[RMDB]
Structure probing data (DMS and 2A3) for a 177-nucleotide construct.
The 2A3 profile rests on 4,314 reads.
RNA sequence: GGGAACGACUCGAGUAGAGUCGAAAACUCCCGCGGAGAGUUGCUUCCUCUUGUUCUCGAGGGCCUUCCUUCUGCGGUGAUCCUCCCUCUCCUUGUCGGUGAACCCGCUCUUGUGAGGCCUCUUCAUCACUUAUCUAUACUUCGGUAUAGAUAAGUGAAAAGAAACAACAACAACAAC
Reactivity to DMS in 0.01 (KOAc 150mM, MgCl2 10mM, bicine 150mM(pH8.5), 24C), signal-to-noise 3, nucleotides 027 to 126: c120u000c020c010c030g040c100g000g000a090g020a060g020u010u000g020c120u010u000c010c000u010c070u020u010g000u000u010c040u000c040g010a060g000g010g000c300c020u000u000c090c000u010u000c020u010g010c030g020g010u000g000a100u000c020c030u000c010c010c020u000c020u000c020c040u000u000g000u010c080g020g010u010g010a080a190c170c000c010g010c040u000c040u010u000g000u000g000a060g010g010c050c060u000c040u000u000c140a120u000
Reactivity to 2A3 in 0.01 (KOAc 150mM, MgCl2 10mM, bicine 150mM(pH8.5), 24C), signal-to-noise 3, nucleotides 027 to 126: c020u000c000c010c000g020c030g000g030a060g010a020g030u070u110g020c050u120u060c000c000u010c010u020u180g060u170u040c060u050c060g030a030g000g000g020c000c020u030u040c000c000u030u050c030u050g000c000g000g060u080g000a040u060c010c010u020c010c000c010u020c010u000c000c030u060u070g090u100c010g000g070u070g050a070a070c000c000c010g030c020u030c020u060u080g060u050g030a030g010g040c010c000u030c010u060u010c010a060u010
Reactivities are rounded to 0.1 and cut off at 0 and 3. The RNA was probed in 150 mM KOAc, 10 mM MgCl2 and 150 mM bicine (pH 8.5) at 24 C.